[RMDB]
RNA sequence: GGGAACGACUCGAGUAGAGUCGAAAAACUCCUAUUCCAACACGUCCUCGUCGUACAGAGUGGUAACAUGUGUCACCACAUAUCAAAGCUUGGGUACACGGGCUUGACCCAACCCCUUGGGCGGAUGAAAACCAGAUUACGUUCGCGUAAUCUGGAAGUCAUACUUUAACUUCGGUUAAAGUAUGACAAAAGAAACAACAACAACAAC
Reactivity to DMS in 0.01 (KOAc 150mM, MgCl2 10mM, bicine 150mM(pH8.5), 24C), signal-to-noise 2, nucleotides 027 to 156: a070c060u000c020c020u000a090u010u000c020c030a110a110c050a050c060g040u000c020c010u010c080g010u000c050g080u000a070c070a190g020a140g000u000g010g010u000a020a050c020a160u000g020u010g030u010c040a110c060c030a020c010a050u010a120u010c060a070a110a120g020c030u000u000g010g020g040u000a080c050a110c050g010g000g000c010u000u010g000a170c060c010c000a080a080c070c010c010c070u000u010g000g000g000c010g000g040a150u000g000a080a120a120a160c000c000a010g000a020u000u000a010c000g020u000u010c270g020c020g040u000a000a010u000c010u020g000g010a010a010
Reactivity to 2A3 in 0.01 (KOAc 150mM, MgCl2 10mM, bicine 150mM(pH8.5), 24C), signal-to-noise 7, nucleotides 027 to 156: a000c070u080c030c010u080a120u140u070c070c020a070a040c040a040c100g030u020c010c010u040c030g100u030c030g050u130a070c060a080g120a030g060u040g020g010u040a060a030c050a120u250g130u100g050u140c030a020c030c010a010c010a050u110a020u120c110a100a060a020g040c050u060u040g010g000g020u060a030c050a040c090g000g000g000c020u100u200g100a220c010c000c000a010a020c000c000c000c000u020u030g030g010g000c020g020g000a030u110g070a030a050a010a050c000c000a000g000a000u000u000a000c000g010u040u060c200g000c000g070u000a000a000u000c000u000g000g000a000a000